[RMDB]
RNA sequence: GGGAACGACUCGAGUAGAGUCGAAAAGGCAUCAUCGUCAUUGGCGGCAACCUGACCCUGGACGCCCGCCUGCGCUGCCUGCAAAGCGGCGCGGACGCCUGCGUGCCCCUGCCGGCCGACGAGCGCAGACUGGUGCACUGUUCGCAGUGCACCAGUCAAAAGAAACAACAACAACAAC
Reactivity to DMS in 0.01 (KOAc 150mM, MgCl2 10mM, bicine 150mM(pH8.5), 24C), signal-to-noise 1, nucleotides 027 to 126: g010g010c150a110u000c050a080u030c030g030u000c010a300u040u000g040g020c000g010g000c000a090a140c040c030u000g020a130c070c020c020u010g000g030a070c050g020c050c290c040g000c020c050u000g000c040g020c000u000g020c030c000u010g060c270a090a070a140g000c010g010g000c000g000c040g000g040a060c050g000c090c140u010g060c090g000u010g080c000c090c060c100u000g000c000c060g000g010c020c050g010a060c070g010a040g030c170g000c070a060
Structure probing data (DMS) for a 177-nucleotide construct. Source: RMDB library OK2TRN, as collected in RNAgym. Conditions: 150 mM KOAc, 10 mM MgCl2 and 150 mM bicine (pH 8.5), 24 C. Reactivities are given for positions 27 through 126.